The record gives the reactivity of an RNA of 177 nucleotides to DMS. Conditions: 150 mM KOAc, 10 mM MgCl2 and 150 mM bicine (pH 8.5), 24 C. For DMS, 1,115 sequencing reads were counted. DMS adducts were read by reverse transcription with MarathonRT.

RNA sequence: GGGAACGACUCGAGUAGAGUCGAAAAGAUAUGGAUGCUCAUCAGAUUAGAGACUUAAGAACUACAGCGGUCUUCGGAAACGAAGAACGCUGCUUAAGUCUCUAAUCGACGACGAGCAUCCUAAGUCGUGUACAUACGAGUUCGCUCGUAUGUACACAAAAGAAACAACAACAACAAC
Reactivity to DMS in 0.01 (KOAc 150mM, MgCl2 10mM, bicine 150mM(pH8.5), 24C), signal-to-noise 1, nucleotides 027 to 126: g000a070u000a300u000g000g000a000u000g010c000u000c000a050u010c010a160g000a000u000u000a020g000a050g020a030c000u000u000a000a000g010a100a080c080u030a300c010a010g000c000g020g010u020c000u000u010c010g000g020a080a170a170c000g030a010a000g000a040a000c000g000c000u010g000c000u000u000a020a030g000u010c000u010c000u010a020a000u000c000g000a080c290g000a030c040g000a020g000c010a000u000c000c000u010a000a110g010u010c110